[RMDB]
This 207-nucleotide RNA was probed chemically with 2A3.
RNA sequence: GGGAACGACUCGAGUAGAGUCGAAAAAAGCGGCACAAAAGUAAUUGCCAACAAUUACGACUACGCUCUGGCUGCUUAAUUGACGGCCACGUCGAACCGGUUCACGCCUGAUAGACCGGUGAGACGUAACUUCAUCAGGCUGGCAUCUGACGGCGCUGCAUGAGAAAUUGUUCGCAAUUUCUCAUGCAAAAGAAACAACAACAACAAC
Reactivity to 2A3 in 0.01 (KOAc 150mM, MgCl2 10mM, bicine 150mM(pH8.5), 24C), signal-to-noise 2, nucleotides 027 to 156: a000a000g040c060g060g010c120a030c030a150a090a010a000g000u000a030a030u010u010g070c100c020a050a080c020a050a000u030u030a020c030g040a040c060u180a090c020g040c040u040c070u020g020g000c010u010g000c000u030u030a080a040u300u050g070a130c030g000g000c000c000a020c010g000u000c000g000a000a000c000c000g000g000u040u060c030a010c040g010c000c000u010g000a030u000a020g000a000c000c000g000g000u000g000a000g000a000c000g000u000a000a000c010u200u150c020a020u000c000a020g010g020c040u010g020g000c000a070u040c100u150g040a080c030g010g050c070g000c090u040
It was measured as part of the RMDB library ARCHII.